Background: This 177-nucleotide RNA was probed chemically with DMS and 2A3. 2A3 adducts were read by reverse transcription with SuperScript II with manganese. The reactions ran in a buffer of 150 mM KOAc, 10 mM MgCl2 and 150 mM bicine (pH 8.5), at 24 C. Reactivities are given for positions 27 through 126. For 2A3, 2,309 sequencing reads were counted.
[RMDB]
RNA sequence: GGGAACGACUCGAGUAGAGUCGAAAAAGAAGCUGCUAAAAAAUGUGAUCCUGUAAUCUUAGAACCAAUGAUGAAAGUAACUAUUGAAAUGCCUGAAGAGUACAUGGGUGAUAUCAUGGGUGACGUACCACUUAGCGUAGUUCGCUACGCUAAGUGGAAAAGAAACAACAACAACAAC
Reactivity to DMS in 0.01 (KOAc 150mM, MgCl2 10mM, bicine 150mM(pH8.5), 24C), signal-to-noise 2, nucleotides 027 to 126: a030g040a060a020g000c030u000g010c060u020a040a040a040a130a060a100u020g000u030g020a070u000c020c000u000g020u000a080a070u010c010u030u010a090g020a110a100c030c030a060a030u010g000a080u030g000a140a020a050g000u020a080a020c110u010a110u030u000g020a060a060a080u010g010c060c010u020g010a100a100g000a040g010u000a030c100a020u000g000g000g000u010g020a060u060a060u010c090a030u010g000g000g040u020g010a050c080g030u030a150
Reactivity to 2A3 in 0.01 (KOAc 150mM, MgCl2 10mM, bicine 150mM(pH8.5), 24C), signal-to-noise 3, nucleotides 027 to 126: a000g090a010a000g000c020u060g000c040u120a100a150a000a000a090a100u110g000u090g050a060u030c000c000u000g050u080a080a080u030c060u040u110a040g050a050a040c060c010a080a090u110g030a130u040g070a070a010a180g050u070a060a040c020u030a030u080u050g040a060a040a030u120g030c030c050u060g020a030a010g060a010g110u020a020c030a100u120g030g000g030u070g040a020u030a000u110c070a070u070g020g000g070u040g010a020c020g000u000a050